[RMDB]
RNA sequence: GGGAACGACUCGAGUAGAGUCGAAAAUGGACUUUUUACAGUUCCUACUUAUCCGGUUUUAACGCUGUUUUAUUGGCGCAAAGGUUUACGGAUAAACAACUAAUAAUUAAAUCUUUUGUGUGCGAAAAUUGGACGUUUAGGUUCGCCUAAACGUCAACUGUCAUCUACUGUUCGCAGUAGAUGACAGAAAAGAAACAACAACAACAAC
Reactivity to 2A3 in 0.01 (KOAc 150mM, MgCl2 10mM, bicine 150mM(pH8.5), 24C), signal-to-noise 2, nucleotides 027 to 156: u110g020g060a070c020u130u070u110u140u240a070c180a010g040u100u070c000c020u010a070c020u040u010a000u000c000c000g080g030u010u030u000u030a170a030c000g050c040u070g150u130u160u050u080a080u190u210g030g000c010g000c040a060a040a010g030g000u030u030u010a020c000g000g010a000u020a060a050a020c030a050a020c050u200a100a130u110a220a030u250u070a080a020a030u020c000u080u170u090u060g030u020g010u050g140c110g060a010a080a150a230u140u100g090g010a000c000g010u000u020u000a010g000g000u020u000c120g080c070c010u010a000a000a030c020g000u000c000a010a000
Notes: This 207-nucleotide RNA was probed chemically with 2A3. The RNA was probed in 150 mM KOAc, 10 mM MgCl2 and 150 mM bicine (pH 8.5) at 24 C. The 2A3 profile rests on 670 reads. For 2A3 the reverse transcriptase was SuperScript II with manganese.